Source information
Structure probing data (2A3 and DMS) for a 177-nucleotide construct. Reactivities are given for positions 27 through 126. For 2A3 the reverse transcriptase was SuperScript II with manganese. It was measured as part of the RMDB library OK2TRN. For 2A3, 767 sequencing reads were counted. The reactions ran in a buffer of 150 mM KOAc, 10 mM MgCl2 and 150 mM bicine (pH 8.5), at 24 C.
RNA sequence: GGGAACGACUCGAGUAGAGUCGAAAAUGGAAUACGGUAAAAAGAAUUUGCACAUACUAUAAUGUACCUUUCAAUAAAGCUAUUGGAAAUAAUGCUUAUCUAUGUCAGAAGGGGAUUUAUAAUCCUAGUAUGGAGGAGUUUUCGAACUCCUCCAUACAAAAGAAACAACAACAACAAC
Reactivity to 2A3 in 0.01 (KOAc 150mM, MgCl2 10mM, bicine 150mM(pH8.5), 24C), signal-to-noise 1, nucleotides 027 to 126: u070g000g000a060a000u120a130c030g070g070u230a100a080a030a000a030g070a090a050u000u020u070g070c020a000c000a060u040a030c000u000a020u060a170a000u070g040u070a090c010c000u010u000u000c020a020a040u100a140a190a020g060c040u070a010u100u060g070g060a000a070a070u120a000a020u100g000c000u000u010a000u040c010u000a030u130g060u030c040a020g020a060a040g020g000g010g020a000u020u030u060a070u030a080a020u000c000c090u000a080
Reactivity to DMS in 0.01 (KOAc 150mM, MgCl2 10mM, bicine 150mM(pH8.5), 24C), signal-to-noise 2, nucleotides 027 to 126: u020g030g020a090a080u020a080c080g010g010u010a020a070a100a110a270g020a110a090u000u020u000g000c180a040c060a040u000a080c100u000a060u010a020a020u010g000u010a280c090c050u000u000u010c020a080a030u000a030a070a070g020c080u010a050u000u000g010g010a040a080a070u010a090a040u000g000c010u000u000a050u000c170u010a070u010g020u020c100a100g040a020a070g010g010g000g030a100u000u000u000a040u000a060a130u000c010c000u000a130